Structure probing data (DMS and 2A3) for a 177-nucleotide construct.
Source: RMDB library OK2TRN, as collected in RNAgym.
Conditions: 150 mM KOAc, 10 mM MgCl2 and 150 mM bicine (pH 8.5), 24 C.
For 2A3 the reverse transcriptase was SuperScript II with manganese.
For 2A3, 4,105 sequencing reads were counted.
Values cover nucleotides 27 to 126.
[RMDB]
RNA sequence: GGGAACGACUCGAGUAGAGUCGAAAAUCGCUGACAAGGUGAAAGUGGCAGAGAUACUUAACUCAAUGGUAGGUGCCGCACCGGGGUACAGAGUCCUCAACAGGAACAUCAUCACUGCCGAAGAGGAUGUGAUAGUUAGUUUCGACUAACUAUCACAAAAAGAAACAACAACAACAAC
Reactivity to DMS in 0.01 (KOAc 150mM, MgCl2 10mM, bicine 150mM(pH8.5), 24C), signal-to-noise 6, nucleotides 027 to 126: u010c040g010c030u000g020a090c090a080a120g000g000u010g010a060a100a140g010u000g010g000c030a040g010a090g010a120u010a060c110u000u000a080a110c080u010c100a070a090u010g020g020u010a030g010g010u010g010c030c030g000c060a080c060c030g000g000g000g000u010a170c120a090g000a130g000u000c000c020u000c040a050a100c110a070g000g000a040a080c110a060u000c100a070u010c070a090c040u010g010c010c020g010a100a100g000a050g000g000a150
Reactivity to 2A3 in 0.01 (KOAc 150mM, MgCl2 10mM, bicine 150mM(pH8.5), 24C), signal-to-noise 4, nucleotides 027 to 126: u030c010g000c010u020g030a050c040a120a070g030g040u100g090a190a050a020g050u110g030g000c000a000g030a000g010a130u080a140c040u150u100a190a060c040u030c140a050a100u070g030g000u030a050g030g040u010g030c040c000g030c020a010c010c040g020g000g050g000u060a070c010a050g100a030g110u030c010c000u030c020a050a110c020a040g010g010a050a050c010a070u110c010a020u060c000a020c090u070g000c020c010g000a060a030g020a010g080g020a060